[RMDB]
RNA sequence: GGGAACGACUCGAGUAGAGUCGAAAAUAGACAGCGGGUACAAAAGCCGCGUUAUUGAGCCCCGAAAAAUUCAUAUUGCAUGAGGCUUUCACUUUCGUGAUAGUGGGAGCGGUCGUAUACGCACGCCGCGUAAUAUGAGGUUCGCCUCAUAUUACGCAAAAGAAACAACAACAACAAC
Reactivity to DMS in 0.01 (KOAc 150mM, MgCl2 10mM, bicine 150mM(pH8.5), 24C), signal-to-noise 7, nucleotides 027 to 126: u000a040g020a040c040a180g030c010g000g000g020u030a100c240a100a110a140a210g000c000c000g010c000g010u010u000a020u000u000g000a230g010c050c000c000c100g020a010a060a060a060a110u020u010c060a030u010a120u020u020g010c130a040u020g000a050g000g000c020u000u000u010c010a020c010u000u010u020c180g030u030g010a050u020a030g020u000g000g000g000a030g010c010g010g010u010c050g000u010a060u020a080c130g000c080a040c130g010c190c100
Reactivity to 2A3 in 0.01 (KOAc 150mM, MgCl2 10mM, bicine 150mM(pH8.5), 24C), signal-to-noise 8, nucleotides 027 to 126: u050a010g170a010c070a050g010c010g020g030g020u300a100c080a060a190a020a020g040c000c000g010c000g000u000u000a020u020u050g060a040g020c000c000c000c000g130a060a060a020a040a030u150u090c050a020u090a050u140u230g050c040a030u090g050a020g120g000c000u000u020u010c000a010c000u070u170u220c150g100u140g090a110u090a100g000u020g010g010g000a020g000c020g000g010u050c010g010u050a060u030a160c060g030c060a020c040g060c020c020

Notes: An RNA of 177 nucleotides, treated with DMS and 2A3 and read out base by base. For DMS the reverse transcriptase was MarathonRT. Conditions: 150 mM KOAc, 10 mM MgCl2 and 150 mM bicine (pH 8.5), 24 C. 2A3 adducts were read by reverse transcription with SuperScript II with manganese. Reactivities are rounded to 0.1 and cut off at 0 and 3. Reactivities are given for positions 27 through 126.